[RMDB]
RNA sequence: GGGAACGACUCGAGUAGAGUCGAAAAGAAAGCGUCAUUCGACGAAUGAGAAGAUAAUGACGCAAAGAAAAACGUGAGCAACCUUCUCAGCGCACGACAAGAAAUCUCAUUCGCAGAAAUAAGAAAACCAUCGAUAGUAGUUCGCUACUAUCGAUGGAAAAGAAACAACAACAACAAC
Reactivity to DMS in 0.01 (KOAc 150mM, MgCl2 10mM, bicine 150mM(pH8.5), 24C), signal-to-noise 2, nucleotides 027 to 126: g030a070a070a090g000c030g000u000c000a070u070u030c170g030a180c040g000a010a020u020g010a000g060a140a090g000a080u050a070a000u000g000a060c020g000c010a090a130a130g040a090a030a010a040a030c030g000u000g000a040g000c000a050a040c160c120u010u010c030u000c040a140g030c000g000c000a010c040g000a300c260a110a140g000a030a050a090u000c000u000c000a010u010u010c000g100c150a250g000a020a030a050u100a110a090g000a020a080a050a080
Reactivity to 2A3 in 0.01 (KOAc 150mM, MgCl2 10mM, bicine 150mM(pH8.5), 24C), signal-to-noise 4, nucleotides 027 to 126: g070a000a050a000g020c000g000u000c010a020u070u040c110g090a070c050g000a050a020u020g010a010g010a090a030g040a100u120a140a000u040g000a010c010g030c010a030a100a000g090a020a080a000a000a000c010g010u000g000a020g000c030a040a070c010c060u170u060c070u030c040a020g000c010g020c000a000c010g110a020c140a060a040g090a110a070a050u000c000u000c020a000u000u000c000g000c020a020g080a060a090a020u200a110a030g090a050a060a020a070